This 177-nucleotide RNA was probed chemically with 2A3 and DMS. Values cover nucleotides 27 to 126. The data come from the RNA Mapping Database (RMDB), library M2PK50. The 2A3 profile rests on 6,516 reads.
RNA sequence: GGGAACGACUCGAGUAGAGUCGAAAAUUAAUAGAUUUCGAUCUAUUAAACAGGCGGAGGGUCGCUCCUAGCGACCGGCGCAAGCGCGCACGGUACAGCGAAUACUGAAUCCCUUCGGGGAUUCAAACCAACUUAUAUCAUUCGUGAUAUAAGUUGGAAAAGAAACAACAACAACAAC
Reactivity to 2A3 in 0.01 (KOAc 150mM, MgCl2 10mM, bicine 150mM(pH8.5), 24C), signal-to-noise 4, nucleotides 027 to 126: u010u000a000a010u000a020g010a020u060u050u060c140g030a010u000c010u000a010u000u020a030a050a040c060a050g010g040c030g030g100a070g020g030g000u010c000g000c010u000c000c000u000a020g000c020g030a010c000c000g000g000c000g000c020a130a160g220c100g010c000g000c200a150c060g040g000u080a190c040a030g000c010g060a050a040u110a210c080u040g000a010a000u000c020c010c010u020u050c210g020g010g000g000a010u010u000c000a000a000a000
Reactivity to DMS in 0.01 (KOAc 150mM, MgCl2 10mM, bicine 150mM(pH8.5), 24C), signal-to-noise 3, nucleotides 027 to 126: u010u010a000a020u000a010g000a020u000u000u000c140g010a010u000c000u010a000u010u000a010a010a100c170a210g010g010c010g010g010a300g010g000g010u000c010g010c010u000c010c030u000a070g020c020g010a030c000c000g010g000c010g030c010a120a080g010c300g010c010g010c000a060c000g010g010u000a080c040a150g010c030g000a090a070u020a090c160u010g000a020a010u000c000c000c000u000u020c190g040g010g010g000a010u000u000c000a030a090a170